[RMDB]
RNA sequence: GGGAACGACUCGAGUAGAGUCGAAAAUGGUCGUUAUCUAUAAAUGACGUACGGGUCGAUUGUAAUACCAACACCUGCGUGGAUCCAAAGUACUUCUCCCAUGUGGAGUUCAGUCGGCGGAGACGACCCACUUGUUCAUCUUCGGAUGAACAAGUGGAAAAGAAACAACAACAACAAC
Reactivity to 2A3 in 0.01 (KOAc 150mM, MgCl2 10mM, bicine 150mM(pH8.5), 24C), signal-to-noise 9, nucleotides 027 to 126: u100g030g000u020c020g010u040u030a120u110c110u070a120u100a260a190a130u170g050a020c010g010u050a050c080g020g000g080u100c110g070a120u010u080g040u090a100a120u080a300c110c030a010a020c020a020c040c000u020g010c020g030u040g040g050a020u000c010c000a040a020a010g070u080a070c000u300u300c000u020c010c020c020a220u210g150u300g000g000a000g000u020u050c020a010g010u000c000g000g020c020g000g000a010g000a000c010g020a020c010
Reactivity to DMS in 0.01 (KOAc 150mM, MgCl2 10mM, bicine 150mM(pH8.5), 24C), signal-to-noise 5, nucleotides 027 to 126: u050g010g000u000c000g010u000u010a040u010c090u020a130u060a060a090a070u040g000a040c030g010u010a040c140g020g000g000u010c100g000a080u000u000g030u020a100a110u010a090c150c020a050a050c070a120c020c000u010g000c070g000u000g000g010a100u000c010c010a050a300a160g010u040a020c030u000u040c000u000c010c000c000a130u020g050u070g000g000a030g000u000u010c040a010g000u010c000g000g020c300g000g010a060g020a070c030g000a050c060
An RNA of 177 nucleotides, treated with 2A3 and DMS and read out base by base. The reactions ran in a buffer of 150 mM KOAc, 10 mM MgCl2 and 150 mM bicine (pH 8.5), at 24 C. 2A3 adducts were read by reverse transcription with SuperScript II with manganese. It was measured as part of the RMDB library OK1LIB.